[RMDB]
This 177-nucleotide RNA was probed chemically with 2A3 and DMS.
RNA sequence: GGGAACGACUCGAGUAGAGUCGAAAAAGGAUGGAGUGCAGUGGUGAGAUCUCAGCUUACUGCAGCCUUGACCUCCUGGGCUCAAGCGAUCCUCCUGCCUCACCCUCCCAAGUAGCUGGGACUACAGAUGUAGAGCUAGGUUCGCCUAGCUCUACAUAAAAGAAACAACAACAACAAC
Reactivity to 2A3 in 0.01 (KOAc 150mM, MgCl2 10mM, bicine 150mM(pH8.5), 24C), signal-to-noise 3, nucleotides 027 to 126: a000g090g000a090u150g050g020a040g060u180g020c010a010g000u060g170g080u080g080a250g040a110u000c080u080c120a090g020c010u030u100a040c060u080g090c090a020g030c010c010u030u040g070a120c020c040u090c020c070u160g010g010g000c020u030c030a060a010g000c010g040a020u030c000c020u000c010c000u040g030c000c000u010c030a060c000c000c010u000c000c010c010a040a050g030u030a000g000c060u170g110g000g090a080c010u060a020c050a020g150
Reactivity to DMS in 0.01 (KOAc 150mM, MgCl2 10mM, bicine 150mM(pH8.5), 24C), signal-to-noise 3, nucleotides 027 to 126: a040g000g020a120u020g010g000a050g020u010g020c010a020g020u020g000g020u000g010a090g000a090u000c050u000c070a150g030c020u010u010a040c100u010g020c050a070g010c050c050u000u010g020a090c050c040u010c130c130u000g000g010g000c220u000c040a040a070g000c060g000a060u000c030c020u000c010c000u000g010c020c020u000c070a100c070c010c010u000c020c020c020a070a100g010u000a020g000c020u010g000g000g010a080c020u000a030c050a160g000
DMS adducts were read by reverse transcription with MarathonRT.